[RMDB]
RNA sequence: GGGAACGACUCGAGUAGAGUCGAAAAUUUGCCGGAUCGUUUGUACAAAUAGACUACAUCGUCGCACACGUGACAUUGAGCAUAUCUGUUGGCAGGUGUCAUUUUGUUUGUACAUAGCAUUGGCAACUGUUUAUUGACACAAUUGCGUCGUCGUGCGAAAUCACAGGUAGUUCGCUACCUGUGAUUUAAAAGAAACAACAACAACAAC
Reactivity to DMS in 0.01 (KOAc 150mM, MgCl2 10mM, bicine 150mM(pH8.5), 24C), signal-to-noise 2, nucleotides 027 to 156: u000u010u010g020c010c020g060g000a060u000c060g000u010u020u000g000u010a030c030a050a040a060u000a000g010a080c070u000a070c030a060u020c030g000u000c050g000c010a060c030a040c070g050u010g010a090c070a280u010u000g020a200g010c080a070u000a050u010c030u000g010u000u010g040g020c030a130g060g010u000g010u000c070a100u010u000u010u000g050u000u000u000g020u000a050c020a040u000a120g020c050a090u000u000g020g010c010a020a040c150u010g020u000u000u000a110u000u000g010a150c090a090c070a060a140u010u000g010c020g010u010c070g030u000c090g000u000g000c050g010
Reactivity to 2A3 in 0.01 (KOAc 150mM, MgCl2 10mM, bicine 150mM(pH8.5), 24C), signal-to-noise 4, nucleotides 027 to 156: u030u020u030g010c000c010g080g050a090u090c150g080u030u030u090g020u000a020c030a020a050a030u080a050g030a020c000u050a040c050a050u040c040g150u060c020g020c040a040c010a010c130g060u030g060a040c060a130u110u250g040a110g050c010a020u030a050u150c050u080g070u140u140g100g000c070a080g000g010u000g000u020c070a030u020u040u050u030g010u020u010u010g050u010a040c010a040u120a020g020c030a020u020u030g010g000c010a010a020c010u060g110u060u110u050a170u090u110g030a030c010a010c010a140a140u100u100g050c040g030u050c010g020u010c040g010u070g060c040g070